[RMDB]
RNA sequence: GGGAACGACUCGAGUAGAGUCGAAAAGCGCAAUCUGUGAAUCUUUAACUGGUUAUAGGGUUGAAUACGCAGAGGACGAAUAUCCCACUUCGCAUCAGUUUUGCAUAGUGAUUCCACCUGAUACAGACGUUCCGUGCAAGUUCGCUUGCACGGAACGAAAAGAAACAACAACAACAAC
Reactivity to 2A3 in 0.01 (KOAc 150mM, MgCl2 10mM, bicine 150mM(pH8.5), 24C), signal-to-noise 2, nucleotides 027 to 126: g050c000g000c060a000a000u090c010u010g020u000g110a070a020u100c050u100u040u030a010a030c000u020g000g140u300u170a140u220a240g070g070g070u060u000g000a000a000u080a030c050g000c010a000g000a020g000g030a020c000g000a060a000u080a010u060c030c000c000a020c040u040u090c000g040c000a050u020c020a040g070u000u030u030u180g030c000a030u070a050g030u030g080a060u030u000c020c000a010c000c000u000g090a000u020a070c010a130g020a040
Conditions: 150 mM KOAc, 10 mM MgCl2 and 150 mM bicine (pH 8.5), 24 C. An RNA of 177 nucleotides, treated with 2A3 and read out base by base. For 2A3, 624 sequencing reads were counted. Source: RMDB library OK1LIB, as collected in RNAgym. Reactivities are given for positions 27 through 126.